[RMDB]
RNA sequence: GGGAACGACUCGAGUAGAGUCGAAAAGGAGUCAUCACACAAGAUGACAUGCAGAACCCAAAAGGGUUGAAAGAAAGAGUUGAGAAAUGGCUGAAAGAGUGUGGUGUCGACAGGUUAAAGAGGAUGGUGCUUGGUGCAAAUUCGUUUGCACCAAGCAAAAAGAAACAACAACAACAAC
Reactivity to DMS in 0.01 (KOAc 150mM, MgCl2 10mM, bicine 150mM(pH8.5), 24C), signal-to-noise 2, nucleotides 027 to 126: g010g010a160g020u010c000a030u010c010a110c190a180c300a100a130g000a050u000g030a070c040a030u010g010c080a100g020a050a040c050c010c010a090a070a110a090g040g000g000u000u000g000a030a060a090g000a100a060a110g000a080g020u000u000g000a100g000a040a110a050u000g000g000c040u000g000a080a080a090g010a070g020u000g020u010g000g010u000g000u000c030g030a070c100a030g000g010u000u000a020a080a070g000a070g010g010a030u000g020g020
Overview
Chemical mapping of a 177-nucleotide RNA with DMS. DMS adducts were read by reverse transcription with MarathonRT. For DMS, 1,406 sequencing reads were counted. Conditions: 150 mM KOAc, 10 mM MgCl2 and 150 mM bicine (pH 8.5), 24 C.